[RMDB]
RNA sequence: GGGAACGACUCGAGUAGAGUCGAAAACAUUUGACAGUUAUGGCAAAAGGACGGCAACGUCAGCGCGUUCCGAGACGCAACGGUCGCCGACGAUAAAAUCGUAUCGAUUGAAAUCAGCGGCUCGGGGGGACGUGGGGAAGUUCGCUUCCCCACGUCCAAAAGAAACAACAACAACAAC
Reactivity to 2A3 in 0.01 (KOAc 150mM, MgCl2 10mM, bicine 150mM(pH8.5), 24C), signal-to-noise 1, nucleotides 027 to 126: c070a000u000u080u300g010a030c030a030g010u220u030a180u110g060g130c000a040a110a090a180g060g060a000c000g000g000c000a300a000c000g190u060c010a000g000c110g040c080g040u190u000c000c000g000a000g000a000c010g010c000a010a000c000g000g010u010c000g000c040c010g090a010c000g000a090u150a210a110a000a160u110c000g000u010a010u000c010g010a010u000u110g010a020a020a070u180c010a000g000c000g000g000c000u000c000g000g060g030g250